[RMDB]
RNA sequence: GGGAACGACUCGAGUAGAGUCGAAAAGAAAACAUGGAAACAUGCAGGUGGCCACCCGCCCGCGCCACCGUUACUCCACUCCACUCCUUCGGGACUGGUUUGGAGGAACAUAACAGGGCAAAAAAAACAAUGUACUUUAGUUCGCUAAAGUACAUUGAAAAGAAACAACAACAACAAC
Reactivity to DMS in 0.01 (KOAc 150mM, MgCl2 10mM, bicine 150mM(pH8.5), 24C), signal-to-noise 5, nucleotides 027 to 126: g010a090a070a090a150c010a000u010g000g000a190a100a200c010a010u000g020c070a090g020g010u000g000g000c020c090a130c100c040c070g000c000c000c010g030c210g000c010c010a010c030c010g010u000u000a040c010u000c000c000a020c000u000c000c000a010c110u000c000c010u000u020c170g030g000g030a020c090u000g000g000u000u000u000g000g010a010g010g000a010a010c030a090u010a060a110c160a060g000g000g010c040a000a000a000a040a070a050a050a130
Reactivity to 2A3 in 0.01 (KOAc 150mM, MgCl2 10mM, bicine 150mM(pH8.5), 24C), signal-to-noise 2, nucleotides 027 to 126: g080a010a090a010a020c010a010u030g010g000a070a030a020c010a000u030g010c050a030g020g000u000g000g000c020c020a040c040c040c040g000c000c010c010g000c000g000c000c000a000c000c000g000u010u020a010c000u000c000c000a000c000u000c000c010a010c010u000c000c010u020u060c200g070g000g000a000c010u000g000g000u010u000u010g000g010a000g000g010a000a010c010a020u120a080a030c040a090g000g010g000c050a030a020a010a010a010a010a000a000